Description: Source: RMDB library OK1LIB, as collected in RNAgym. Structure probing data (2A3) for a 177-nucleotide construct. 2A3 adducts were read by reverse transcription with SuperScript II with manganese. Conditions: 150 mM KOAc, 10 mM MgCl2 and 150 mM bicine (pH 8.5), 24 C.
RNA sequence: GGGAACGACUCGAGUAGAGUCGAAAAGUGCAAUGUAAUGCAUCCAAGUUCCAUCAGGGUGCAAUUAUAGUUGCCAUGGUACCCGAACACCAGACACCCACCCAAGUGAGCAAUGGAUUCGCCUAUAAGGUUGCGCGUACUUCGGUACGCGCAACCUAAAAGAAACAACAACAACAAC
Reactivity to 2A3 in 0.01 (KOAc 150mM, MgCl2 10mM, bicine 150mM(pH8.5), 24C), signal-to-noise 1, nucleotides 027 to 126: g080u150g000c000a000a000u020g030u050a000a000u040g000c000a000u010c000c000a120a140g300u200u140c100c060a270u160c070a060g000g060g000u000g000c060a060a000u000u000a070u000a060g180u010u000g030c030c030a010u050g040g180u250a070c000c000c000g040a030a000c000a030c000c000a000g040a000c000a050c030c060c000a000c000c000c040a080a000g260u060g070a070g040c030a050a050u080g000g000a000u090u010c000g060c000c040u120a160u000a150